[RMDB]
Conditions: 150 mM KOAc, 10 mM MgCl2 and 150 mM bicine (pH 8.5), 24 C. The record gives the reactivity of an RNA of 177 nucleotides to DMS and 2A3. High DMS reactivity at an A or C suggests that its Watson-Crick edge is free. For DMS the reverse transcriptase was MarathonRT. Values cover nucleotides 27 to 126.
RNA sequence: GGGAACGACUCGAGUAGAGUCGAAAAAGAAAUAGCGUACUGUACACUCAGAAUGUACGCUAAGUAAGUGUGUGUUCUAUAACGUCCAAUUGAAGACACACACAGUUGGACCGAGUGUAAAAAAAAAUACAUACCGAAGUUUCGACUUCGGUAUGUAAAAAGAAACAACAACAACAAC
Reactivity to DMS in 0.01 (KOAc 150mM, MgCl2 10mM, bicine 150mM(pH8.5), 24C), signal-to-noise 1, nucleotides 027 to 126: a090g000a100a100a070u000a020g000c000g010u000a010c020u000g000u000a060c010a010c010u000c050a130g050a110a060u010g020u000a020c000g010c000u000a010a070g030u010a090a080g010u000g030u010g010u000g000u010u000c040u010a080u010a080a070c110g010u000c100c100a080a160u000u010g000a120a100g010a000c000a020c000a000c010a000c000a080g010u000u010g000g000a100c080c110g020a020g000u000g000u000a000a000a000a010a010a060a010a150a140
Reactivity to 2A3 in 0.01 (KOAc 150mM, MgCl2 10mM, bicine 150mM(pH8.5), 24C), signal-to-noise 1, nucleotides 027 to 126: a000g140a010a050a030u020a010g020c000g000u000a000c000u040g050u140a030c000a000c010u050c010a040g040a180a110u060g000u000a010c000g000c000u000a030a000g050u090a070a070g010u000g010u020g000u010g060u010u060c060u040a120u030a240a070c060g110u000c040c000a070a030u040u120g110a090a030g020a010c000a000c000a000c000a000c010a040g030u090u070g090g000a060c070c070g000a020g000u080g000u090a300a010a000a000a000a000a000a000a000